[RMDB]
RNA sequence: GGGAACGACUCGAGUAGAGUCGAAAAGAUAGAUAGUACUCGUAAAAACUCUCUUUCGCAGGCCGCGUAUUUUGAGAGACGAAGCCGUGAAGUAGCGAAAGCUACGACGAAGCGCGUGACCGGCCGAUGCGCGAACAGCAUCAAGUACGAGUACGAAAGGUAAUCAUCCAUUCGUGGAUGAUUACCUAAAAGAAACAACAACAACAAC
Reactivity to 2A3 in 0.01 (KOAc 150mM, MgCl2 10mM, bicine 150mM(pH8.5), 24C), signal-to-noise 1, nucleotides 027 to 156: g100a020u200a020g030a010u060a090g000u000a000c000u000c010g000u000a060a060a050a070a080c060u040c000u000c010u050u050u050c140g010c030a040g030g010c030c010g000c050g040u080a190u030u260u120u100g080a060g000a010g010a030c060g040a070a000g000c000c000g040u060g110a210a020g000u010a000g000c010g000a070a000a000g000c000u000a000c010g000a010c010g100a130a010g000c060g000c030g050u050g010a040c020c000g020g000c030c050g000a030u130g020c050g010c060g060a100a050c050a040g050c000a000u000c000a090a000g050u000a000c000g000a000g000u020a000c000g000a010a020